Source: RMDB library OK3TST, as collected in RNAgym. The record gives the reactivity of an RNA of 207 nucleotides to 2A3.

RNA sequence: GGGAACGACUCGAGUAGAGUCGAAAACUCCGCAGUUCACCAAUCGCACCUUCUCUGGGUCGGGGGUCCACAGGUAUUGCGUCUGCGAUUGCUCGCCAAACUGGAGAUCGCAGUAGACGUGGGGUCGUCUCCGCAGCUCCACUUCUGCGAUUACUACGCAUCAUAACCGCUUCGGCGGUUAUGAUGCAAAAGAAACAACAACAACAAC
Reactivity to 2A3 in 0.01 (KOAc 150mM, MgCl2 10mM, bicine 150mM(pH8.5), 24C), signal-to-noise 2, nucleotides 027 to 156: c050u030c010c010g020c050a020g030u080u100c020a020c080c030a080a040u060c030g000c040a010c020c000u100u030c030u000c020u090g010g010g030u120c090g050g000g000g000g000u050c020c020a050c010a050g000g030u090a060u070u130g020c050g010u020c040u040g020c010g040a020u010u100g020c050u070c030g080c020c040a060a110a080c030u060g040g020a060g020a060u010c000g000c020a010g010u060a050g050a060c090g000u010g000g000g010g020u080c030g070u060c060u050c110c060g030c040a010g000c000u000c000c000a010c000u030u030c010u010g010c000g010a010u050u010a010c020u020a010c040